RNA sequence: GGGAACGACUCGAGUAGAGUCGAAAAUCCGAUGGUCCUUCUCGCCCACAGGGUUCGAGUCGCACGGAAGCCUGAGCAGACCAAAGGGAGAUGAUUCCUUGGGAUAUGCUAGUGCCCAAGCACUGCUUGAGCGCGACGCCGCCAAACUGCGGGGAAACAAAUGUCAUCACUUCGGUGAUGACAUUUGAAAAGAAACAACAACAACAAC
Reactivity to 2A3 in 0.01 (KOAc 150mM, MgCl2 10mM, bicine 150mM(pH8.5), 24C), signal-to-noise 3, nucleotides 027 to 156: u020c010c010g020a210u080g020g030u040c030c000u030u050c010u000c000g060c010c020c020a230c100a130g030g000g020u090u110c040g010a010g020u010c020g000c050a010c060g070g080a090a010g050c020c000u050g070a000g010c000a020g030a040c010c000a100a060a030g030g010g010a040g000a050u300g010a060u000u050c000c000u010u010g040g000g020a170u050a060u270g000c000u030a020g020u020g040c030c020c020a000a030g010c030a130c300u240g000c000u020u020g030a050g020c000g010c010g000a000c060g030c070c030g020c030c020a110a150a100c040u010g010c050g000g020g020g000a000a090a010
Reactivity to DMS in 0.01 (KOAc 150mM, MgCl2 10mM, bicine 150mM(pH8.5), 24C), signal-to-noise 2, nucleotides 027 to 156: u000c020c010g020a140u000g040g030u010c050c030u030u000c020u000c050g030c030c010c000a090c020a100g030g060g000u000u000c010g000a080g020u040c040g010c010a040c020g020g010a110a110g020c020c010u000g010a080g080c040a090g010a300c010c020a020a050a050g000g010g020a040g000a300u000g010a290u010u000c010c000u000u000g000g030g040a080u000a120u000g000c050u000a080g040u000g010c010c020c070a070a100g000c000a130c070u000g000c000u000u000g000a060g000c030g020c000g020a030c020g010c060c030g040c030c030a080a100a300c060u000g000c020g030g010g010g010a100a080a230